[RMDB]
RNA sequence: GGGAACGACUCGAGUAGAGUCGAAAAGAAAAUCAAAAUUAGAGAAGUGAAGGCUGAGAUUAGAAAGGUAAAGAAGGUAGGAUAUUGUCACUGGUUAAGGGUAACCACCACCACCAAAAUAAAAAAACUAUUACAACUUGUUCGCAAGUUGUAAUAGAAAAGAAACAACAACAACAAC
Reactivity to DMS in 0.01 (KOAc 150mM, MgCl2 10mM, bicine 150mM(pH8.5), 24C), signal-to-noise 2, nucleotides 027 to 126: g000a090a080a120a040u010c050a030a080a080a090u010u020a090g000a140g000a100a090g020u010g000a080a070g030g010c040u000g000a050g000a060u010u000a030g000a030a070a050g010g020u010a070a040a090g000a080a050g010g010u030a030g030g000a070u000a040u000u010g010u010c060a090c070u000g000g000u020u010a040a050g000g030g000u010a020a060c090c050a020c040c050a060c040c080a060c040c030a050a020a040a070u020a020a030a090a020a060a050a150
Reactivity to 2A3 in 0.01 (KOAc 150mM, MgCl2 10mM, bicine 150mM(pH8.5), 24C), signal-to-noise 1, nucleotides 027 to 126: g000a000a090a000a050u040c010a000a060a070a140u190u130a070g020a000g050a250a000g020u090g040a060a000g000g000c030u060g020a030g000a110u080u040a010g050a010a070a010g040g020u070a190a000a000g040a070a000g110g000u080a040g030g020a010u060a030u110u080g050u070c030a000c090u060g010g010u060u030a040a130g020g100g030u000a040a050c010c000a020c040c000a050c000c030a040c050c030a070a110a070a020u290a080a080a030a000a000a020a020

Chemical mapping of a 177-nucleotide RNA with DMS and 2A3.
Values cover nucleotides 27 to 126.
The reactions ran in a buffer of 150 mM KOAc, 10 mM MgCl2 and 150 mM bicine (pH 8.5), at 24 C.